[RMDB]
RNA sequence: GGGAACGACUCGAGUAGAGUCGAAAAUGUUACGUGAUCAUGAUACUGUCAGAAUUUAUAAACCAUGGCUAACAGCACAUCAGCUUUCAUUGCCGAAGUAUGUCGUCAGAGAAGAUACACCUAAUACACACUGAUGAAUUUUCGAAUUCAUCAGUGUAAAAGAAACAACAACAACAAC
Reactivity to DMS in 0.01 (KOAc 150mM, MgCl2 10mM, bicine 150mM(pH8.5), 24C), signal-to-noise 6, nucleotides 027 to 126: u020g020u000u000a050c180g010u020g010a060u010c040a060u020g010a100u020a090c050u000g000u010c080a080g010a100a040u020u020u020a060u010a070a080a090c090c060a080u010g000g000c030u000a050a070c190a060g010c030a060c100a040u010c060a070g000c030u000u000u010c070a050u010u020g010c010c040g000a040a080g010u010a040u010g000u010c030g000u010c030a040g010a080g000a150a050g000a070u010a050c070a090c030c030u010a040a050u010a080c220
Reactivity to 2A3 in 0.01 (KOAc 150mM, MgCl2 10mM, bicine 150mM(pH8.5), 24C), signal-to-noise 9, nucleotides 027 to 126: u130g010u030u070a030c050g030u050g030a040u040c050a150u050g050a040u070a140c010u040g050u070c050a060g090a130a120u090u170u050a170u190a080a050a020c050c010a060u090g040g000c030u050a060a030c030a050g010c010a030c010a130u070c030a020g020c000u040u080u090c050a070u040u150g020c020c010g010a050a020g050u070a060u150g050u030c030g030u010c020a010g020a010g010a140a010g010a030u050a070c020a030c000c010u020a050a030u130a080c090
Overview
An RNA of 177 nucleotides, treated with DMS and 2A3 and read out base by base. 2A3 adducts were read by reverse transcription with SuperScript II with manganese. The reactions ran in a buffer of 150 mM KOAc, 10 mM MgCl2 and 150 mM bicine (pH 8.5), at 24 C. Source: RMDB library OK1LIB, as collected in RNAgym.